The record gives the reactivity of an RNA of 207 nucleotides to 2A3 and DMS. The data come from the RNA Mapping Database (RMDB), library M2RFOK. Values cover nucleotides 27 to 156. For 2A3, 2,216 sequencing reads were counted. 2A3 adducts were read by reverse transcription with SuperScript II with manganese. DMS adducts were read by reverse transcription with MarathonRT.
RNA sequence: GGGAACGACUCGAGUAGAGUCGAAAAAUCAGAGGGCGCUAUCAUGCAAACUAGGAUUGUCUGCUCAUGCACAGAACCAACUACCGACAACUAACAGUGCAUGAAGGUUAGUUAUUCCAUAUUAAUUAAAACUCGUAAUUCUUCGGAAUUACGAGAAUCUGUUCUGUAAGUUCGCUUACAGAACAGAAAAAGAAACAACAACAACAAC
Reactivity to 2A3 in 0.01 (KOAc 150mM, MgCl2 10mM, bicine 150mM(pH8.5), 24C), signal-to-noise 4, nucleotides 027 to 156: a000u040c020a050g030a050g050g050g000c010g000c010u110a140u300c090a070u220g020c020a000a040a020c030u030a030g070g000a030u020u080g030u050c020u040g050c020u020c020a010u010g000c000a010c000a040g040a120a070c080c020a090a050c040u160a120c050c040g080a060c060a020a020c020u050a020a010c010a080g000u030g020c010a010u010g010a030a010g030g000u040u040a000g010u040u020a050u170u060c010c000a040u110a050u260u150a130a070u090u140a030a050a050a080c000u010c000g000u000a000a000u010u000c010u000u020c140g070g000a000a000u000u000a000c000g000a000g000a010a000
Reactivity to DMS in 0.01 (KOAc 150mM, MgCl2 10mM, bicine 150mM(pH8.5), 24C), signal-to-noise 2, nucleotides 027 to 156: a070u020c040a090g000a090g040g020g010c210g010c070u020a090u000c070a070u000g020c010a120a180a180c080u050a190g020g000a080u000u000g000u020c000u000g020c060u000c020a050u000g040c020a030c020a200g030a120a120c020c030a010a040c100u020a270c040c040g010a140c030a030a110c070u010a070a090c080a080g000u020g000c000a040u000g000a050a120g000g020u000u010a070g010u000u000a100u010u010c000c020a110u010a120u010u000a050a200u010u010a040a050a010a110c010u000c010g010u000a000a000u010u000c000u010u010c300g020g000a040a020u000u000a020c000g000a000g000a020a020